[RMDB]
RNA sequence: GGGAACGACUCGAGUAGAGUCGAAAAUCAGGUGCUAAGCGAAUAUGUUCUAUGUGGUGGUGGUUACUACGUCAAACCUGGAGGUACCAGUAGCGGAGAUGCCACCACUGCAUAUGCCAAUAGUGUCGUUAUGAUUCCAGUUCGCUGGAAUCAUAACAAAAGAAACAACAACAACAAC
Reactivity to DMS in 0.01 (KOAc 150mM, MgCl2 10mM, bicine 150mM(pH8.5), 24C), signal-to-noise 5, nucleotides 027 to 126: u010c060a120g010g000u000g000c030u000a030a070g010c030g010a050a070u000a080u000g010u000u010c110u000a000u010g020u010g020g030u000g000g010u000g010g010u000u010a240c020u000a020c010g010u000c070a040a110a160c270c010u010g010g000a220g030g020u010a170c010c000a020g000u000a300g000c010g000g000a030g010a300u000g010c010c010a010c000c000a000c000u000g000c000a000u000a000u010g010c260c050a040a090u000a040g020u000g000u000c110
Reactivity to 2A3 in 0.01 (KOAc 150mM, MgCl2 10mM, bicine 150mM(pH8.5), 24C), signal-to-noise 3, nucleotides 027 to 126: u060c010a010g060g020u060g020c010u030a040a030g040c020g080a100a040u140a050u140g080u100u020c050u030a010u010g010u020g000g030u010g000g020u010g010g010u020u080a130c010u000a000c010g060u090c080a110a130a140c020c000u000g010g030a090g140g160u090a160c000c000a000g000u020a020g000c020g000g020a010g010a030u050g010c000c000a010c020c000a000c000u000g000c000a000u000a010u040g000c000c000a030a040u040a040g070u070g090u090c060